[RMDB]
RNA sequence: GGGAACGACUCGAGUAGAGUCGAAAAGUACCGCGACGUCGCAUCGGUCACAGCUGCCACAAGAGUCUCAGCUGAGGCAGGCACACAACGUGCCCACCUCAGCGCGACAAAGCGUGGCCAUCGCUACCCCUCACCCCAUUUUCGAAUGGGGUGAGGGAAAAGAAACAACAACAACAAC
Reactivity to DMS in 0.01 (KOAc 150mM, MgCl2 10mM, bicine 150mM(pH8.5), 24C), signal-to-noise 1, nucleotides 027 to 126: g040u000a220c000c040g040c070g010a080c120g000u000c010g000c000a040u000c100g040g020u010c140a000c040a270g000c040u000g080c050c110a110c080a120a050g000a230g000u000c030u000c070a100g010c000u010g000a000g000g000c030a110g000g030c000a000c000a220c190a290a040c300g030u000g020c000c000c010a130c000c000u000c000a040g000c020g000c300g000a030c000a050a040a160g000c100g000u000g010g000c000c030a090u000c210g000c030u040a190c190
Reactivity to 2A3 in 0.01 (KOAc 150mM, MgCl2 10mM, bicine 150mM(pH8.5), 24C), signal-to-noise 1, nucleotides 027 to 126: g040u040a040c000c020g000c070g090a110c080g050u000c020g050c030a030u070c070g060g010u030c010a000c040a050g000c010u060g070c080c020a140c040a080a030g060a040g140u010c000u020c040a070g000c010u000g000a000g000g030c010a040g010g070c000a000c010a020c000a000a300c140g000u000g000c010c010c010a000c000c000u000c010a020g010c000g000c010g000a010c000a040a050a000g010c000g000u010g000g000c000c000a010u030c000g000c010u020a060c010